[RMDB]
RNA sequence: GGGAACGACUCGAGUAGAGUCGAAAAGGGAGACCCGAGCAGAGGCAUAGCGAACUGCGCACGGUGAAGCCUUGAGGGAACGCCGUAGGACCCGGGUUCGAUUCCCGGCCGCUCCACCGAAGGGCCACGUAUUUAGGGCGUUCGCGCCCUAAAUACGAAAAGAAACAACAACAACAAC
Reactivity to 2A3 in 0.01 (KOAc 150mM, MgCl2 10mM, bicine 150mM(pH8.5), 24C), signal-to-noise 2, nucleotides 027 to 126: g030g020g010a060g030a050c000c000c010g020a040g040c040a030g030a080g140g000c130a150u150a100g010c060g030a040a060c030u030g030c050g030c050a030c020g000g020u030g050a050a020g030c010c010u120u150g080a110g000g070g000a030a090c020g000c010c000g000u070a050g010g110a070c000c010c000g010g040g000u010u120c040g010a070u020u020c000c000c000g000g000c000c030g090c090u000c000c010a040c000c020g060a070a000g000g030g000c000c000a080
Reactivity to DMS in 0.01 (KOAc 150mM, MgCl2 10mM, bicine 150mM(pH8.5), 24C), signal-to-noise 2, nucleotides 027 to 126: g000g020g000a050g000a110c150c000c000g000a040g040c020a100g020a100g020g070c080a080u040a190g000c110g020a060a100c070u010g020c050g000c080a130c040g090g000u010g020a130a060g020c020c000u000u010g000a230g000g000g000a090a150c110g000c030c040g000u010a040g000g000a070c130c080c040g020g000g010u020u040c210g010a300u030u010c000c000c000g000g000c180c050g010c000u000c010c120a100c030c040g000a110a070g030g010g000c040c030a070

The record gives the reactivity of an RNA of 177 nucleotides to 2A3 and DMS. Conditions: 150 mM KOAc, 10 mM MgCl2 and 150 mM bicine (pH 8.5), 24 C. DMS adducts were read by reverse transcription with MarathonRT. Reactivities are given for positions 27 through 126. Source: RMDB library OK1LIB, as collected in RNAgym.